The record gives the reactivity of an RNA of 177 nucleotides to DMS and 2A3. 2A3 adducts were read by reverse transcription with SuperScript II with manganese. High DMS reactivity at an A or C suggests that its Watson-Crick edge is free. It was measured as part of the RMDB library 15KREP. For DMS, 3,093 sequencing reads were counted. Conditions: 150 mM KOAc, 10 mM MgCl2 and 150 mM bicine (pH 8.5), 24 C.

[RMDB]
RNA sequence: GGGAACGACUCGAGUAGAGUCGAAAAGCCUUCCGGAGAUCCUUCUCGAGAUCAUCCACUAACUUUCUUGCAUUGACCCACUGCUCGAGGACUCCUUCUCUUCCCGCUCGGGAUUUCUUCGUCUCGGUCUAACGCUAAGUUUCGACUUAGCGUUAGAAAAAGAAACAACAACAACAAC
Reactivity to DMS in 0.01 (KOAc 150mM, MgCl2 10mM, bicine 150mM(pH8.5), 24C), signal-to-noise 3, nucleotides 027 to 126: g000c040c080u010u000c090c060g000g010a160g000a060u000c020c030u000u020c060u010c140g010a100g010a070u010c030a130u010c020c030a090c090u000a080a090c100u000u000u000c040u000u010g000c110a140u000u000g010a110c020c030c050a080c060u000g000c010u000c000g010a060g000g010a120c130u000c030c040u000u010c030u010c030u000u000c000c010c010g010c160u010c030g000g000g000a020u000u000u010c080u010u010c090g010u000c020u010c020g020g010
Reactivity to 2A3 in 0.01 (KOAc 150mM, MgCl2 10mM, bicine 150mM(pH8.5), 24C), signal-to-noise 3, nucleotides 027 to 126: g030c010c000u050u000c060c050g050g010a030g000a030u020c020c000u080u150c090u070c110g160a170g010a050u040c020a160u010c010c000a030c080u090a110a060c030u040u150u100c030u040u130g010c030a090u030u110g020a050c000c010c020a060c040u020g000c000u010c000g010a020g020g060a080c020u030c010c000u060u020c010u000c010u020u020c000c000c000g020c030u040c020g030g000g000a030u030u080u020c070u070u090c060g020u000c010u010c010g020g020